Source information
The record gives the reactivity of an RNA of 177 nucleotides to DMS. For DMS the reverse transcriptase was MarathonRT. For DMS, 1,134 sequencing reads were counted. Reactivities are given for positions 27 through 126.
[RMDB]
RNA sequence: GGGAACGACUCGAGUAGAGUCGAAAAGAUAUGGAGCACUCGAUUGUAAUCUCAUGAGCAAGCAAUACGAUCGGAAACGAUCGUUUGUGAUGACCUCAUGAGGAUUACAAUCGAGUGCUCCUAAGUCGUAACGCAUAGCGUUCGCGCUAUGCGUUACAAAAGAAACAACAACAACAAC
Reactivity to DMS in 0.01 (KOAc 150mM, MgCl2 10mM, bicine 150mM(pH8.5), 24C), signal-to-noise 1, nucleotides 027 to 126: g010a090u020a300u010g000g010a020g020c000a020c000u000c000g030a030u000u010g010u000a000a010u000c000u010c000a010u000g000a020g030c000a060a200g000c010a030a010u020a010c020g020a020u000c030g000g020a180a080a260c000g010a010u000c010g010u010u010u010g000u000g000a090u010g010a080c300c000u000c000a000u010g010a040g000g000a030u000u000a000c020a020a000u000c020g000a010g010u000g020c000u000c000c000u000a000a040g000u000c140